RNA sequence: GGGAACGACUCGAGUAGAGUCGAAAAUGAGAUCUUCUUCUUGACUUAUAGCUUGAAUAGGCUUAGAAAUAAAUCUAAUAGGAUUUAUCCCACUUAUCUCUACCCAUUCAAACAAACGAGCCUCAGAACUCCCCUGGAGGUUCGCCUCCAGGGGAGUAAAAGAAACAACAACAACAAC
Reactivity to 2A3 in 0.01 (KOAc 150mM, MgCl2 10mM, bicine 150mM(pH8.5), 24C), signal-to-noise 1, nucleotides 027 to 126: u170g000a000g010a000u000c040u050u060c050u050u000c000u000u060g060a140c050u120u160a120u050a250g000c010u000u050g020a070a020u160a090g050g010c050u060u160a000g020a010a080a010u120a050a010a000u000c010u070a020a070u040a300g000g020a000u000u000u060a050u170c000c000c000a040c020u030u200a040u040c070u000c000u120a210c030c000c010a000u130u140c130a140a190a080c000a000a140a000c010g000a000g000c000c000u040c050a000g010a200
Description
Chemical mapping of a 177-nucleotide RNA with 2A3. The data come from the RNA Mapping Database (RMDB), library OK1LIB. As a SHAPE reagent, 2A3 marks flexible, mostly unpaired nucleotides at the ribose 2'-OH.